[RMDB]
RNA sequence: GGGAACGACUCGAGUAGAGUCGAAAACACGCCUCUCUGCAAAACUGGAUACGUUCAUAGCCGCAAUGCGCUUGACACUAUGAUAGACUCCUAGGGGCUUCAACGUCCACUUGCCUCAGCAUAGCGGUCUCUGUAGCGUAUUCGUACGCUACAGAGAAAAAGAAACAACAACAACAAC
Reactivity to DMS in 0.01 (KOAc 150mM, MgCl2 10mM, bicine 150mM(pH8.5), 24C), signal-to-noise 3, nucleotides 027 to 126: c070a110c130g020c040c000u000c030u000c030u030g000c080a030a030a070a120c100u020g020g010a070u000a090c110g000u010u010c030a020u000a050g020c030c030g010c040a150a090u000g010c110g010c060u010u000g020a100c110a070c040u000a050u000g000a080u000a080g000a110c080u010c050c050u000a060g030g040g000g020c020u000u000c150a050a090c100g000u000c020c010a060c050u000u000g000c020c030u010c040a120g000c050a030u000a080g010c050g010g010
Reactivity to 2A3 in 0.01 (KOAc 150mM, MgCl2 10mM, bicine 150mM(pH8.5), 24C), signal-to-noise 2, nucleotides 027 to 126: c060a030c040g000c000c010u000c010u000c040u060g070c070a050a070a090a140c040u030g030g010a010u020a120c040g030u020u050c020a040u040a080g050c040c020g020c040a110a100u080g010c080g010c080u000u040g040a040c000a000c060u030a030u090g040a020u040a080g110a050c030u050c050c040u040a050g000g000g060g000c000u110u120c060a050a020c040g080u050c010c000a100c080u050u110g020c010c020u080c050a010g020c010a030u010a030g040c040g000g070